[RMDB]
RNA sequence: GGGAACGACUCGAGUAGAGUCGAAAAUGAGACAAACACGCUUCACAAUGUGCGGCAAAGAAACAUUGUUUAUGCAAAGGCACUUCGCAAUGCGUGCUCAAACAUUGCUUAUUCAAACACGCUUCACAAAAGAAUCAGUGGUUCGCCACUGAUUCAAGUUUACGAACGACUUCGGUCGUUCGUAAACAAAAGAAACAACAACAACAAC
Reactivity to 2A3 in 0.01 (KOAc 150mM, MgCl2 10mM, bicine 150mM(pH8.5), 24C), signal-to-noise 2, nucleotides 027 to 156: u100g050a050g030a010c050a040a160a000c070a000c080g010c020u050u060c000a010c000a000a050u030g000u010g010c010g090g030c080a140a080a020g110a000a070a000c010a000u020u040g030u000u060u080a160u080g020c060a070a110a100g040g000c010a000c030u100u060c060g040c090a060a050u080g020c030g030u030g020c000u070c060a130a170a040c000a060u040u150g010c020u040u090a090u250u080c060a030a030a030c080a040c110g030c020u060u070c060a010c030a070a030a070a020g030a000a000u000c010a000g000u000g000g050u050u050c130g000c050c000a000c000u000g000a000u000u000c000a000a000